[RMDB]
RNA sequence: GGGAACGACUCGAGUAGAGUCGAAAAGGCGGGUUUAAUCCGCCACAGACUGCUGACAAACCUCGAUAACUCGAUCUUGCAAGGUGAAGGCCGGUAGAAGAGUAAAGCGUCCGCGCCAUGGACGGCGCCCCUCGCUAUGAUUCGUCAUAGCGAGGGGAAAAGAAACAACAACAACAAC
Reactivity to DMS in 0.01 (KOAc 150mM, MgCl2 10mM, bicine 150mM(pH8.5), 24C), signal-to-noise 1, nucleotides 027 to 126: g020g030c000g010g030g000u010u010u010a180a180u000c000c000g010c010c000a020c120a100g000a070c050u000g060c020u040g000a080c100a040a100a100c160c000u000c040g030a090u000a210a060c150u000c060g030a070u010c070u000u000g010c030a050a080g000g020u010g000a100a140g010g030c010c020g040g010u000a030g010a040a180g050a140g000u000a080a070a120g000c020g000u000c020c060g050c060g030c090c050a090u000g000g030a060c020g010g000c010g010
Reactivity to 2A3 in 0.01 (KOAc 150mM, MgCl2 10mM, bicine 150mM(pH8.5), 24C), signal-to-noise 2, nucleotides 027 to 126: g000g020c060g030g030g060u140u190u270a180a050u030c000c000g000c000c000a000c000a000g000a020c000u170g000c010u010g020a080c040a030a030a060c000c000u010c040g060a070u080a200a030c030u000c050g050a130u010c050u080u070g010c020a160a160g010g000u050g080a060a030g090g020c030c030g050g010u090a030g040a130a010g040a000g020u120a060a090a000g040c000g030u020c030c030g040c020g030c050c000a090u110g070g050a010c030g000g080c030g000